[RMDB]
The data come from the RNA Mapping Database (RMDB), library OK2TRN. Structure probing data (DMS) for a 177-nucleotide construct. DMS adducts were read by reverse transcription with MarathonRT.
RNA sequence: GGGAACGACUCGAGUAGAGUCGAAAAAGGAAUAAAGAAAUAUCCUAAAUAUUGGAUAUUUUGCUGGGUGAGAGUGGAUGUGGCUCCUUAGUGUGACCAAGCAACACAUCAUUAGAAGGGGUCCCAGAUUUGAUUCCGAUUUCGAUCGGAAUCAAAUAAAAGAAACAACAACAACAAC
Reactivity to DMS in 0.01 (KOAc 150mM, MgCl2 10mM, bicine 150mM(pH8.5), 24C), signal-to-noise 1, nucleotides 027 to 126: a110g000g000a080a170u010a130a150a190g000a040a020a000u020a020u000c010c000u020a010a090a180u010a230u010u000g000g000a020u000a020u000u000u000u000g000c110u010g010g000g000u020g020a050g010a050g030u000g000g000a090u000g000u000g010g000c010u020c000c030u010u020a100g010u000g010u000g010a110c090c050a050a140g010c200a100a120c080a030c040a060u010c110a110u020u000a110g000a110a020g000g000g020g050u000c010c030c040a070g000